[RMDB]
RNA sequence: GGGAACGACUCGAGUAGAGUCGAAAAGAUAUGGAUCCCUUCGAGGAUCGUGCGGUCGGAAACGACCGUCACGGGAGAAGUCAUCCUAAGUCAAACUGGACCCCUUGCUUCGGCAAGGGGUCCAGAACAAUUCAGAAUACUUCGGUAUUCUGAAUUGAAAAGAAACAACAACAACAAC
Reactivity to DMS in 0.01 (KOAc 150mM, MgCl2 10mM, bicine 150mM(pH8.5), 24C), signal-to-noise 1, nucleotides 027 to 126: g000a070u000a300u010g000g000a030u000c030c080c000u000u000c010g000a110g020g000a020u010c000g000u000g030c000g010g000u010c000g000g000a090a090a260c000g000a010c000c000g010u000c010a000c030g000g010g000a100g000a020a010g000u000c130a020u000c000c000u000a090a110g020u000c010a110a150a230c010u000g010g040a010c000c000c070c060u000u020g030c010u010u020c170g020g000c000a020a060g000g000g000g000u000c000c010a000g000a030a160

Record summary:
An RNA of 177 nucleotides, treated with DMS and read out base by base. DMS adducts were read by reverse transcription with MarathonRT.